[RMDB]
RNA sequence: GGGAACGACUCGAGUAGAGUCGAAAAGAUAUGGAACGAUCUGUAGCUAGACCGCUCGGAAACGAGAUGGUCUUGGACCUACAGAGUCGUUCCUAAGUCAAAAGAUAGGCAGUUCGCUGCCUAUCAAUCGCACAGACACGUUCGCGUGUCUGUGCGAAAAAGAAACAACAACAACAAC
Reactivity to DMS in 0.01 (KOAc 150mM, MgCl2 10mM, bicine 150mM(pH8.5), 24C), signal-to-noise 1, nucleotides 027 to 126: g020a090u000a300u010g000g010a030a040c020g000a050u000c000u020g000u000a040g020c040u000a010g040a040c000c000g000c000u000c000g010g000a080a060a300c000g020a000g010a040u030g010g030u000c000u000u000g010g020a110c300c000u000a000c000a040g000a000g040u000c000g040u000u000c000c000u010a020a080g010u000c050a090a090a220a110g010a010u000a000g000g000c010a000g000u000u020c300g030c010u000g000c000c000u020a000u000c000a050a070